The record gives the reactivity of an RNA of 177 nucleotides to 2A3 and DMS. DMS (dimethyl sulfate) methylates the pairing face of unpaired adenines and cytosines. The DMS profile rests on 2,787 reads. DMS adducts were read by reverse transcription with MarathonRT. 2A3 adducts were read by reverse transcription with SuperScript II with manganese. The reactions ran in a buffer of 150 mM KOAc, 10 mM MgCl2 and 150 mM bicine (pH 8.5), at 24 C. It was measured as part of the RMDB library OK2TST.

[RMDB]
RNA sequence: GGGAACGACUCGAGUAGAGUCGAAAAUUCAGAGUUCUUCUUCCACUCUCAGCAUGUCCGUCCAACAGUUAGGUGGAUAGCUGCAUGCUGUAACCUUCCUGAAGUAGAGACUUUAGUUGCAAGGCAACACGGCUAUUAACUUCGGUUAAUAGCCGUGAAAAGAAACAACAACAACAAC
Reactivity to 2A3 in 0.01 (KOAc 150mM, MgCl2 10mM, bicine 150mM(pH8.5), 24C), signal-to-noise 2, nucleotides 027 to 126: u100u020c040a040g000a010g090u060u010c030u070u000c010u080u000c040c020a070c020u000c010u020c000a020g000c020a020u010g040u020c030c050g020u010c000c030a030a040c000a140g180u280u260a110g050g110u060g010g010a000u040a100g040c090u090g000c010a010u010g000c000u000g030u040a050a050c010c000u020u030c000c000u000g000a010a000g030u110a070g060a050g050a290c030u030u040u000a040g010u080u140g040c050a040a000g010g040c000a070a010
Reactivity to DMS in 0.01 (KOAc 150mM, MgCl2 10mM, bicine 150mM(pH8.5), 24C), signal-to-noise 4, nucleotides 027 to 126: u010u010c060a090g000a060g000u010u000c060u000u000c060u000u010c060c080a110c090u000c060u020c010a010g020c020a030u000g000u000c300c030g020u000c010c010a060a100c030a180g010u020u020a090g020g040u000g020g000a020u000a040g050c300u000g010c040a010u000g000c000u000g020u000a040a170c060c010u000u000c030c020u000g000a030a040g020u010a090g010a130g010a140c030u000u000u000a020g010u000u000g000c050a040a070g020g010c130a030a130